[RMDB]
RNA sequence: GGGAACGACUCGAGUAGAGUCGAAAACGGACAGGGGGGUCCCCGCCAUCCCGCGGGGCCUGUCCGAACGGGCCGCGCGGACUCCUGCGCCGGGCGGCCGGUGGUUGUCGCUCGGGGGUGAUCGCCGGCAUGCUGGUAUUUUCGAAUACCAGCAUGCAAAAGAAACAACAACAACAAC
Reactivity to DMS in 0.01 (KOAc 150mM, MgCl2 10mM, bicine 150mM(pH8.5), 24C), signal-to-noise 1, nucleotides 027 to 126: c030g000g000a020c020a000g000g000g040g020g000g000u040c040c010c000c010g010c010c090a190u000c030c050c080g030c000g000g000g000g000c000c000u010g000u010c010c000g020a020a050c090g000g020g000c000c000g000c030g000c000g000g000a060c030u010c040c040u000g020c100g030c000c050g000g000g020c000g000g000c000c000g000g010u040g000g010u010u000g050u000c030g030c030u020c030g030g020g020g000g000u020g010a050u010c010g000c000c000g000
Reactivity to 2A3 in 0.01 (KOAc 150mM, MgCl2 10mM, bicine 150mM(pH8.5), 24C), signal-to-noise 1, nucleotides 027 to 126: c010g010g000a000c010a030g000g000g010g010g060g050u140c010c010c000c000g010c000c000a120u070c050c000c000g000c000g000g000g000g020c010c000u000g000u000c010c010g010a040a020c000g040g030g000c000c000g020c040g010c020g020g010a040c000u060c030c050u100g000c070g020c040c020g020g040g000c000g010g000c020c000g000g020u050g010g010u060u040g040u030c030g010c010u000c010g030g000g010g010g020u060g020a090u070c020g010c010c000g000